An RNA of 177 nucleotides, treated with DMS and 2A3 and read out base by base. Source: RMDB library TTRINS, as collected in RNAgym. Conditions: 150 mM KOAc, 10 mM MgCl2 and 150 mM bicine (pH 8.5), 24 C. DMS adducts were read by reverse transcription with MarathonRT.
[RMDB]
RNA sequence: GGGAACGACUCGAGUAGAGUCGAAAAGAUAUGGAGCAUCUACCCACCCACACACAGAAAUCUCUAUGAAGGCUUUCGGAAACGAAAGCUGGAGAGAUUUCUGUGUGUGGAGGAUGCUCCUAAGUCAGUAAUGUCAAUGGUUCGCCAUUGACAUUACAAAAGAAACAACAACAACAAC
Reactivity to DMS in 0.01 (KOAc 150mM, MgCl2 10mM, bicine 150mM(pH8.5), 24C), signal-to-noise 1, nucleotides 027 to 126: g000a100u000a070u000g010g020a000g040c000a010u000c000u020a200c030c010c040a300c060c000c000a010c000a000c000a030c000a030g010a010a000a010u000c000u000c010u010a290u000g020a140a060g000g000c000u010u000u010c000g000g000a150a170a160c000g000a010a000a010g030c000u000g110g000a030g020a010g000a030u010u000u000c000u010g000u000g010u000g000u000g020g000a010g040g010a010u010g000c000u000c000c000u010a050a100g000u000c170a110
Reactivity to 2A3 in 0.01 (KOAc 150mM, MgCl2 10mM, bicine 150mM(pH8.5), 24C), signal-to-noise 1, nucleotides 027 to 126: g080a050u220a300u300g000g000a020g050c000a010u020c000u110a300c000c000c000a000c040c010c000a020c000a000c010a010c000a010g070a010a000a000u010c020u000c030u050a300u300g060a000a000g010g040c000u060u000u010c010g060g040a120a170a050c040g000a050a000a000g000c000u000g000g000a000g000a000g000a000u000u010u000c000u010g000u000g000u000g010u000g000g040a000g000g000a000u000g000c010u020c000c000u000a000a000g150u050c210a030